Chemical mapping of a 207-nucleotide RNA with 2A3. Values cover nucleotides 27 to 156.

[RMDB]
RNA sequence: GGGAACGACUCGAGUAGAGUCGAAAACUGUGCUUAUCACCAUAACCUUGGCGGUAUGCCACGUAACCGCAAGACCCACUUCUAGCUGCGUCACUUCUCCAAGUAACAACAGUAGCGAGGAAGACGGCAGCGGCUGGGCAUCGCCGACGCCCGGCCCGCCCAGCCAGUAUUUCGAUACUGGCUGGGCAAAAGAAACAACAACAACAAC
Reactivity to 2A3 in 0.01 (KOAc 150mM, MgCl2 10mM, bicine 150mM(pH8.5), 24C), signal-to-noise 1, nucleotides 027 to 156: c020u040g100u130g080c010u170u070a140u090c000a000c060c000a070u140a140a090c080c150u000u000g050g100c020g000g060u170a090u070g090c160c020a030c020g030u030a030a100c040c040g000c150a050a100g060a170c030c000c030a090c030u050u020c010u030a030g000c000u000g050c000g140u140c090a140c200u040u080c020u030c010c000a030a030g140u050a060a220c150a030a030c040a070g050u060a050g050c100g000a030g100g000a000a000g070a010c030g020g030c000a010g000c000g000g070c000u000g000g000g000c000a010u060c170g120c260c080g000a030c090g000c000c000c090g030g000c030c000c010